RNA sequence: GGGAACGACUCGAGUAGAGUCGAAAAAGACACAGAGCUCCCGGCCUUCACAGAAGAACAGCUUGAUCAGGAGCGUGUGCGUCUUAGGUGCUGCGCGUGCCAGGAGCUGCACGAGAAGCUGCUGUGGGCCAAUCAUAGUGUUCGCACUAUGAUUGGCAAAAGAAACAACAACAACAAC
Reactivity to DMS in 0.01 (KOAc 150mM, MgCl2 10mM, bicine 150mM(pH8.5), 24C), signal-to-noise 3, nucleotides 027 to 126: a110g050a120c050a060c060a100g000a100g020c020u000c000c010c020g020g000c110c060u010u000c030a090c070a080g000a070a030g000a090a170c030a020g000c000u010u010g010a190u020c100a130g020g010a120g020c000g010u000g050u000g010c030g010u000c010u010u000a100g050g020u010g010c010u000g000c080g020c080g000u000g000c000c020a080g000g010a080g000c040u010g010c030a040c020g000a080g000a040a060g010c020u000g020c000u000g020u000g010g000
Reactivity to 2A3 in 0.01 (KOAc 150mM, MgCl2 10mM, bicine 150mM(pH8.5), 24C), signal-to-noise 3, nucleotides 027 to 126: a020g060a010c000a000c020a050g080a040g020c010u020c000c000c000g020g070c020c030u130u080c040a060c020a160g070a080a020g050a140a000c010a000g060c000u070u080g070a100u270c050a060g100g040a050g000c020g020u030g020u020g020c030g110u000c040u050u090a160g000g060u040g030c020u070g040c070g030c040g060u050g060c000c030a040g060g000a000g000c060u040g000c050a050c020g080a100g020a070a010g000c020u090g020c020u000g000u020g010g070

This 177-nucleotide RNA was probed chemically with DMS and 2A3. For 2A3 the reverse transcriptase was SuperScript II with manganese. The reactions ran in a buffer of 150 mM KOAc, 10 mM MgCl2 and 150 mM bicine (pH 8.5), at 24 C.